[RMDB]
RNA sequence: GGGAACGACUCGAGUAGAGUCGAAAAGUUAUUUCCAGGAUGGGCUUUAAACUCGAUGCAACAGUUCCUGGAUAUCCUAAGCUUUUCAUUACUCGUGAAGAGGCUGUAAGGCAAGUUCGAAGCUGGAAAGGGCGCGUCUUCGGACGCGCCAAAAGAAACAACAACAACAAC
Reactivity to 2A3 in 0.01 (KOAc 150mM, MgCl2 10mM, bicine 150mM(pH8.5), 24C), signal-to-noise 1, nucleotides 027 to 129: g070u120u120a050u020u010u000c000c000a010g030g030a050u020g000g090g000c000u000u090u020a030a190a000c000u140c100g050a050u160g050c040a160a050c000a070g050u000u080c000c000u080g030g010a010u000a000u010c000c000u000a010a020g000c000u000u000u000u010c040a110u000u060a180c050u030c100g020u000g000a080a000g000a000g020g020c000u000g020u030a040a000g030g000c020a000a000g000u000u000c030g000a060a000g000c060u030g000g160a050a050a050g100